[RMDB]
RNA sequence: GGGAACGACUCGAGUAGAGUCGAAAACGGGUUAUGUGCGCCUUUCACUGUGGUGCAUCUUGGGCGGUAGCAAUGGGCGAUGAUGCUCUCGAAUCGGUGGACUCUAACCUAGCGGAGUAUAAAAAGCCCUGGCUAUCGUCUUCGGACGAUAGCCAGGAAAAGAAACAACAACAACAAC
Reactivity to 2A3 in 0.01 (KOAc 150mM, MgCl2 10mM, bicine 150mM(pH8.5), 24C), signal-to-noise 2, nucleotides 027 to 126: c110g000g040g000u130u100a000u300g000u060g140c020g000c000c000u080u080u080c200a060c200u280g050u080g090g000u000g070c040a000u030c000u090u050g010g000g070c090g010g000u020a040g000c000a110a290u240g000g000g050c030g060a040u130g000a000u100g100c000u000c000u000c030g030a000a010u140c030g000g010u060g100g300a030c000u030c040u050a000a120c000c010u030a000g030c000g010g010a010g000u020a040u180a080a130a040a000a000g020c000
Reactivity to DMS in 0.01 (KOAc 150mM, MgCl2 10mM, bicine 150mM(pH8.5), 24C), signal-to-noise 1, nucleotides 027 to 126: c030g060g020g000u030u000a020u070g040u000g000c000g100c030c020u070u060u000c190a130c170u010g000u000g000g010u000g030c000a100u010c050u000u000g000g000g070c000g040g000u000a030g000c010a280a090u030g050g030g040c010g000a220u020g000a100u100g000c000u000c000u000c100g000a090a140u060c190g010g000u000g000g000a050c070u030c030u000a030a170c000c030u000a080g000c300g000g000a050g010u000a080u000a060a000a000a100a230g000c010